[RMDB]
RNA sequence: GGGAACGACUCGAGUAGAGUCGAAAAGCCAGAUGGGUGCAGGCUAUAGCUGCCAUCGGCUGACCUAGAGAAGACACAUCAGCUGAUCCUUUGGACCCCAUGACUUGAGACAGAAGUUCUGGGCUUCUCCUCCUGCGGCCUAGCUCUGAGACAAUGAUAUCAAAAUACUCUUCGGAGUAUUUUGAUAAAAAGAAACAACAACAACAAC
Reactivity to DMS in 0.01 (KOAc 150mM, MgCl2 10mM, bicine 150mM(pH8.5), 24C), signal-to-noise 2, nucleotides 027 to 156: g010c010c010a100g040a050u020g010g000g040u010g070c040a110g010g040c050u020a050u000a060g030c040u010g020c040c080a040u000c030g010g030c010u020g000a030c020c040u000a170g000a180g000a100a060g000a200c070a110c130a160u000c060a110g040c050u010g000a090u000c020c040u020u010u010g020g000a110c060c010c030c030a090u000g000a070c020u000u000g010a180g000a160c100a100g000a100a050g010u000u000c090u000g050g010g000c020u000u000c060u020c010c000u010c000c010u000g040c080g050g000c010c030u010a030g000c080u000c050u010g000a180g000a140c060a080a100u010g010a240
Reactivity to 2A3 in 0.01 (KOAc 150mM, MgCl2 10mM, bicine 150mM(pH8.5), 24C), signal-to-noise 2, nucleotides 027 to 156: g010c010c020a030g020a030u070g020g030g050u110g050c050a020g080g020c010u150a060u130a220g020c050u100g040c020c000a060u000c010g010g040c000u000g000a010c010c110u090a030g010a020g010a140a040g060a030c040a010c000a110u070c020a010g010c010u050g020a110u160c010c020u060u100u110g040g000a040c010c040c000c000a010u080g010a030c020u040u050g020a010g030a110c020a030g110a150a030g030u100u020c010u020g010g030g000c030u150u040c000u000c000c010u030c000c020u030g020c000g020g030c010c000u000a010g010c020u050c020u070g070a100g010a030c100a100a120u050g060a060